[RMDB]
RNA sequence: GGGAACGACUCGAGUAGAGUCGAAAAGGACUUAGGUUCGCCUAAGUCCAAAUAACGUGUACAAGUACGGUAGACGAAGAUAACGUACAGUACAGAAGUACAAAAGGAGAGACUUCGGUCUCUCCAACGUUGUGAAAUAGUUCGCUAUUUCACAACGAAAAGAAACAACAACAACAAC
Reactivity to DMS in 0.01 (KOAc 150mM, MgCl2 10mM, bicine 150mM(pH8.5), 24C), signal-to-noise 5, nucleotides 027 to 126: g000g010a040c000u010u000a000g010g010u000u000c260g020c010c000u010a000a000g010u000c000c000a020a050a030u010a090a050c130g000u000g020u000a010c000a110a170g010u010a000c010g000g000u000a040g010a160c100g010a120a150g000a160u000a040a040c010g000u000a020c010a150g000u000a010c000a080g000a090a110g020u010a060c150a060a060a120a080g010g000a010g000a030g010a010c000u000u010c150g010g000u000c000u000c000u000c000c000a010a030
Reactivity to 2A3 in 0.01 (KOAc 150mM, MgCl2 10mM, bicine 150mM(pH8.5), 24C), signal-to-noise 6, nucleotides 027 to 126: g000g000a000c000u010u000a000g020g020u050u040c200g050c040c000u000a000a000g000u000c000c000a000a000a000u030a010a000c060g080u030g000u050a030c030a210a180g000u010a000c010g040g080u140a070g070a200c110g140a170a050g050a170u100a130a010c010g000u000a010c010a010g010u000a010c000a020g120a140a020g060u060a080c040a060a110a040a040g000g000a000g000a000g000a010c000u030u050c200g040g000u000c010u000c000u000c000c000a000a010
This 177-nucleotide RNA was probed chemically with DMS and 2A3. Values cover nucleotides 27 to 126. For 2A3, 9,831 sequencing reads were counted. The DMS profile rests on 5,612 reads. As a SHAPE reagent, 2A3 marks flexible, mostly unpaired nucleotides at the ribose 2'-OH.